Chemical mapping of a 207-nucleotide RNA with 2A3.
Values are in units of 0.01, from 0 to 300, in steps of 10.
[RMDB]
RNA sequence: GGGAACGACUCGAGUAGAGUCGAAAAGGACGCCCCGCCCGGUCGGGAUGGGCCGCAGUUCCCGACGAGGAGCCCGCAAGUGGGAGGAUCAGCCACCGGAGGGGACACGAUGCCAAAGAGUGGGGGAAAUCUCGGAGGGUGAUCCCAAGAAGGCCAACACGAUCAAUAACUUCGGUUAUUGAUCGUGAAAAGAAACAACAACAACAAC
Reactivity to 2A3 in 0.01 (KOAc 150mM, MgCl2 10mM, bicine 150mM(pH8.5), 24C), signal-to-noise 1, nucleotides 027 to 156: g000g010a050c100g020c000c000c000c000g010c020c010c010g200g090u230c170g020g010g010a080u110g010g000g000c010c040g000c040a040g000u010u030c010c000c020g000a050c050g020a120g070g030a080g060c000c080c000g030c140a100a070g120u240g070g070g020a120g040g020a070u050c050a020g070c020c000a040c000c000g020g010a120g020g010g000g060a000c020a000c050g100a120u150g070c110c050a060a020a030g130a070g070u200g000g000g000g060g100a070a040a040u100c120u030c020g070g000a080g010g000g040u040g030a040u040c080c000c000a040a030g110a050a030g020g040c070c020a020a040